[RMDB]
RNA sequence: GGGAACGACUCGAGUAGAGUCGAAAACUACCUCAACGCCUUCAUAGGUGCCAACGAACUGUAUAUGUAUAUCAACGUCUGAUAUGUUUUUACCGCUGAUCUUCUUUAUGACUGCAGAGACGUUUACAAUAAUAUUACUCUUCGGAGUAAUAUUAUUAAAAGAAACAACAACAACAAC
Reactivity to DMS in 0.01 (KOAc 150mM, MgCl2 10mM, bicine 150mM(pH8.5), 24C), signal-to-noise 7, nucleotides 027 to 126: c080u010a100c040c030u020c080a090a220c080g010c020c010u000u020c130a100u030a060g010g010u000g010c070c050a090a080c110g000a080a100c080u020g010u000a060u030a050u010g010u020a040u000a030u020c030a050a060c110g000u020c070u000g000a040u020a030u000g000u000u000u030u010u010a060c040c050g000c040u010g000a080u000c030u010u010c030u010u010u010a060u040g010a060c040u010g000c050a100g010a080g000a030c030g000u000u010u010a050c100
Reactivity to 2A3 in 0.01 (KOAc 150mM, MgCl2 10mM, bicine 150mM(pH8.5), 24C), signal-to-noise 9, nucleotides 027 to 126: c030u070a090c000c010u080c040a070a080c040g020c010c010u090u110c090a090u110a140g030g000u020g050c030c020a070a040c070g080a070a050c050u050g100u090a080u050a060u230g110u040a060u010a010u130c030a050a060c060g110u020c060u030g020a030u020a050u110g100u040u090u030u110u120a050c020c020g020c040u030g060a150u020c020u110u010c000u010u210u050a100u170g060a050c010u030g000c030a010g020a010g000a070c010g000u020u070u070a030c020

Source: RMDB library OK1LIB, as collected in RNAgym. Structure probing data (DMS and 2A3) for a 177-nucleotide construct. For 2A3 the reverse transcriptase was SuperScript II with manganese. As a SHAPE reagent, 2A3 marks flexible, mostly unpaired nucleotides at the ribose 2'-OH. The 2A3 profile rests on 11,732 reads.